RNA sequence: GGGAACGACUCGAGUAGAGUCGAAAAGGCGGCUAGUUCGCUAGCCGCCAAAGAGCACAGUCGCCAGCCAAGUGCACAAAAUAAAAGAAAAGGUAGGCGACAAAAGAGGGGCGUUCGCGCCCCUCAACAUCUAAUUACUCUUCGGAGUAAUUAGAUGAAAAGAAACAACAACAACAAC
Reactivity to DMS in 0.01 (KOAc 150mM, MgCl2 10mM, bicine 150mM(pH8.5), 24C), signal-to-noise 2, nucleotides 027 to 126: g010g020c000g000g030c000u000a000g010u000u000c140g010c000u000a000g000c000c020g020c000c000a000a010a050g000a100g010c020a010c050a110g020u000c000g000c010c000a270g020c000c020a130a070g010u000g010c010a130c090a060a040a060a090u010a050a050a130a160g010a070a080a080a110g000g000u000a130g000g010c010g010a030c050a030a040a110a120g020a010g010g030g010g020c010g040u000u010c180g010c000g030c000c000c010c010u000c000a010a070
Reactivity to 2A3 in 0.01 (KOAc 150mM, MgCl2 10mM, bicine 150mM(pH8.5), 24C), signal-to-noise 2, nucleotides 027 to 126: g000g000c010g010g030c000u010a000g020u040u040c090g000c090u000a000g000c010c000g000c000c000a000a000a000g000a010g010c020a000c020a020g010u010c010g000c000c000a010g030c010c020a170a020g070u080g050c070a000c080a060a150a040a020u280a050a150a020a040g140a030a170a020a000g030g000u080a080g000g000c000g000a000c010a000a050a000a000g020a000g000g010g000g000c010g010u040u050c150g020c000g000c040c000c000c000u000c000a000a000
This 177-nucleotide RNA was probed chemically with DMS and 2A3. DMS adducts were read by reverse transcription with MarathonRT. Source: RMDB library M2PK50, as collected in RNAgym.